[RMDB]
RNA sequence: GGGAACGACUCGAGUAGAGUCGAAAAGAUAUGGACGUAUCGAUUAAUAUAGGUCGUCGGAAACGACGACUAUAAAGCUUAUGAGUACGUCCUAAGUCAAACGAGGCCCAGUUCGCUGGGCCUCGAACAACAUUUGUAAGUUCGCUUACAAAUGUUGAAAAGAAACAACAACAACAAC
Reactivity to DMS in 0.01 (KOAc 150mM, MgCl2 10mM, bicine 150mM(pH8.5), 24C), signal-to-noise 5, nucleotides 027 to 126: g010a030u000a130u010g000g000a020c010g010u000a010u010c030g010a180u000u000a090a110u010a070u000a060g010g010u000c000g020u000c000g000g000a040a040a100c000g020a010c000g000a020c000u000a010u000a040a100a160g010c290u010u010a030u000g000a230g000u000a010c010g010u000c000c000u000a020a080g000u000c010a090a110a220c020g010a020g030g010c000c010c000a010g020u000u010c240g030c010u000g000g000g010c000c000u000c000g020a010a090
Reactivity to 2A3 in 0.01 (KOAc 150mM, MgCl2 10mM, bicine 150mM(pH8.5), 24C), signal-to-noise 4, nucleotides 027 to 126: g000a000u040a020u080g000g000a000c000g010u010a030u270c040g020a050u060u220a300a280u150a060u030a160g180g140u030c000g000u010c010g010g000a010a020a000c000g000a000c010g000a000c000u000a000u010a000a020a000g120c050u140u120a020u110g050a050g060u010a010c000g000u000c000c000u000a010a000g010u000c030a080a060a140c020g000a020g000g000c010c010c000a020g020u070u100c260g020c150u000g020g010g000c000c000u000c000g020a000a000
This 177-nucleotide RNA was probed chemically with DMS and 2A3. 2A3 adducts were read by reverse transcription with SuperScript II with manganese. For DMS, 6,474 sequencing reads were counted. For 2A3, 7,473 sequencing reads were counted. It was measured as part of the RMDB library TTRDEL.